[RMDB]
Chemical mapping of a 177-nucleotide RNA with DMS and 2A3.
The 2A3 profile rests on 1,263 reads.
2A3 adducts were read by reverse transcription with SuperScript II with manganese.
For DMS the reverse transcriptase was MarathonRT.
Source: RMDB library OK1LIB, as collected in RNAgym.

RNA sequence: GGGAACGACUCGAGUAGAGUCGAAAAAGUUUGCCCCCCAACCAGACGAACCCAAAAAAAAGGGUUUCAAAAGAACGUGCAGGAGUAACUUUUGAAGUGCCUGUAAAGUGCAUUGAAGGCAGGGGGCGCAUAUAGGAUCCUUCGGGAUCCUAUAUGCAAAAGAAACAACAACAACAAC
Reactivity to DMS in 0.01 (KOAc 150mM, MgCl2 10mM, bicine 150mM(pH8.5), 24C), signal-to-noise 3, nucleotides 027 to 126: a060g000u030u000u020g000c000c000c000c000c000c070a090a240c040c010a100g000a170c170g030a020a020c010c000c030a010a020a000a030a090a050a250a080g000g000g010u010u000u000c030a040a070a120a050g010a070a050c030g020u010g010c000a020g000g010a060g000u010a130a020c000u000u030u040u070g020a010a020g010u010g000c000c000u000g010u000a010a040a160g000u010g000c100a120u010u000g020a100a070g000g040c300a170g000g000g000g010g020c060
Reactivity to 2A3 in 0.01 (KOAc 150mM, MgCl2 10mM, bicine 150mM(pH8.5), 24C), signal-to-noise 2, nucleotides 027 to 126: a000g060u020u030u070g020c000c000c000c040c040c000a100a150c020c000a010g070a130c040g040a070a020c000c000c010a030a040a140a030a000a000a000a140g010g050g000u060u000u000c050a060a060a000a010g090a020a000c010g000u070g030c050a020g020g010a090g050u110a140a040c010u150u140u030u120g060a030a000g010u040g100c000c010u050g000u020a180a040a030g030u010g020c100a130u100u070g100a060a020g030g020c090a080g070g000g010g000g010c000